[RMDB]
Notes
An RNA of 207 nucleotides, treated with DMS and 2A3 and read out base by base. The reactions ran in a buffer of 150 mM KOAc, 10 mM MgCl2 and 150 mM bicine (pH 8.5), at 24 C. 2A3 adducts were read by reverse transcription with SuperScript II with manganese. DMS adducts were read by reverse transcription with MarathonRT.
RNA sequence: GGGAACGACUCGAGUAGAGUCGAAAAAGAAGUUUGGAAAUUACUGUUUUGGCACAAAGCAGAUUAUCUUAGUAGAAAUACAGAAUUACUGCAAUCUGUGAAUAAGACUGCUUUUAAAUAUUUCUACUUGUGUGCUAUCUUACAUAUAGAAUGUGUAAUUACAACUAGCUUUCGAGCUAGUUGUAAUAAAAGAAACAACAACAACAAC
Reactivity to DMS in 0.01 (KOAc 150mM, MgCl2 10mM, bicine 150mM(pH8.5), 24C), signal-to-noise 3, nucleotides 027 to 156: a120g010a120a100g010u000u010u000g010g000a090a130a150u000u010a050c030u000g020u010u010u010u000g030g010c060a060c070a090a060a110g010c030a040g010a220u000u000a040u010c060u000u020a080g030u000a020g000a040a050a050u000a050c030a170g010a150a140u000u000a080c090u000g000c020a010a050u000c000u010g020u000g010a190a210u010a080a060g000a040c010u020g010c010u000u010u010u000a050a100a130u000a040u010u000u000c000u000a000c010u000u010g010u000g020u010g020c020u000a070u010c050u010u010a010c030a040u000a110u000a170g010a080a300u000g000u010g000u000a040
Reactivity to 2A3 in 0.01 (KOAc 150mM, MgCl2 10mM, bicine 150mM(pH8.5), 24C), signal-to-noise 4, nucleotides 027 to 156: a010g090a120a020g020u150u190u230g050g030a060a140a150u150u080a110c030u010g020u010u030u010u050g020g000c000a000c010a050a040a010g000c020a000g030a120u160u130a060u220c040u050u060a010g000u010a000g020a030a030a000u060a030c010a020g120a130a070u130u080a030c070u050g010c010a000a020u000c010u000g030u070g130a120a100u120a090a010g000a010c010u010g000c000u040u040u030u070a070a120a050u030a030u010u040u020c010u000a040c000u060u040g030u000g000u000g080c010u010a060u070c040u040u050a020c010a030u110a010u040a150g220a210a120u120g020u020g000u070a040